[RMDB]
RNA sequence: GGGAACGACUCGAGUAGAGUCGAAAAACGCCGAUUGAUACAUCAACGCUGAUUAACAGCCAGUUUGACACGGUGGAAGUUAACGGAACGCGAAUCACCGGUAAGGUUGGCUACUCUGCAAAAUAUGCGCUUUACGUUCAUAACGCCAGUGGCAAACAACCUAAAUAUAUUUCGAUAUAUUUAGGUUAAAAGAAACAACAACAACAAC
Reactivity to 2A3 in 0.01 (KOAc 150mM, MgCl2 10mM, bicine 150mM(pH8.5), 24C), signal-to-noise 5, nucleotides 027 to 156: a000c070g040c070c020g060a090u060u120g020a030u080a210c090a100u080c050a090a030c060g010c030u030g020a160u190u220a170a080c000a000g010c020c010a030g010u010u020u020g040a040c040a000c010g000g010u040g030g020a130a110g030u020u040a060a000c030g000g010a030a010c030g010c020g040a060a060u110c020a040c050c020g010g070u120a130a060g040g000u100u090g020g000c000u050a100c050u070c050u170g030c050a080a010a090a070u200a100u180g020c020g000c020u060u080u090a090c040g010u020u020c010a030u040a110a010c000g000c010c010a060g020u030g010g000c000a040a030a000c020
Reactivity to DMS in 0.01 (KOAc 150mM, MgCl2 10mM, bicine 150mM(pH8.5), 24C), signal-to-noise 3, nucleotides 027 to 156: a090c070g020c040c010g010a140u000u000g030a170u000a120c030a130u010c030a050a080c060g030c000u010g010a250u000u010a140a100c040a120g000c000c040a170g020u000u020u010g020a110c040a060c020g010g050u010g000g010a100a140g010u010u000a050a070c040g010g000a080a070c030g030c020g000a100a100u000c080a110c020c020g010g020u000a090a050g020g000u010u020g010g000c070u000a090c090u010c030u000g000c050a080a060a070a130u000a090u000g010c020g020c010u010u000u010a070c030g000u000u000c110a130u020a040a140c010g000c020c130a090g040u000g000g020c000a040a050a030c050